This 177-nucleotide RNA was probed chemically with 2A3 and DMS. DMS adducts were read by reverse transcription with MarathonRT. For DMS, 1,494 sequencing reads were counted. The data come from the RNA Mapping Database (RMDB), library OK1LIB. The reactions ran in a buffer of 150 mM KOAc, 10 mM MgCl2 and 150 mM bicine (pH 8.5), at 24 C.

[RMDB]
RNA sequence: GGGAACGACUCGAGUAGAGUCGAAAAGACGCCUGAUGGCGAACGUGCGCAAGAUAAGAAUGGUGGUAUAUACUGCCGAGAAUAACUAAUGGACGGCAGAGCGCACGGACCACCACAGUCCACCAGAAUGAUGGGAGGUGUUCGCACCUCCCAUCAUAAAAGAAACAACAACAACAAC
Reactivity to 2A3 in 0.01 (KOAc 150mM, MgCl2 10mM, bicine 150mM(pH8.5), 24C), signal-to-noise 2, nucleotides 027 to 126: g040a000c030g040c000c030u280g170a280u300g000g000c010g070a150a000c000g000u000g000c000g000c000a040a120g020a200u140a050a020g090a040a100u080g000g090u000g030g020u000a080u000a000u040a190c000u000g000c000c000g000a000g190a070a060u280a050a000c010u080a020a150u120g170g100a000c050g000g000c000a030g010a030g000c000g000c000a000c000g000g000a000c000c000a030c040c010a120c000a130g090u000c000c000a000c000c000a030g050a100
Reactivity to DMS in 0.01 (KOAc 150mM, MgCl2 10mM, bicine 150mM(pH8.5), 24C), signal-to-noise 2, nucleotides 027 to 126: g000a290c100g000c000c000u000g060a140u000g000g000c010g020a040a050c000g000u030g010c000g000c010a210a060g000a240u110a080a010g000a120a030u020g010g000u000g000g010u000a130u000a030u060a300c000u000g000c000c010g000a150g000a100a060u040a030a150c190u080a160a010u050g000g030a190c070g000g030c000a000g000a150g020c000g000c010a030c020g000g000a130c130c010a150c100c170a080c290a090g000u050c000c000a000c000c000a180g000a090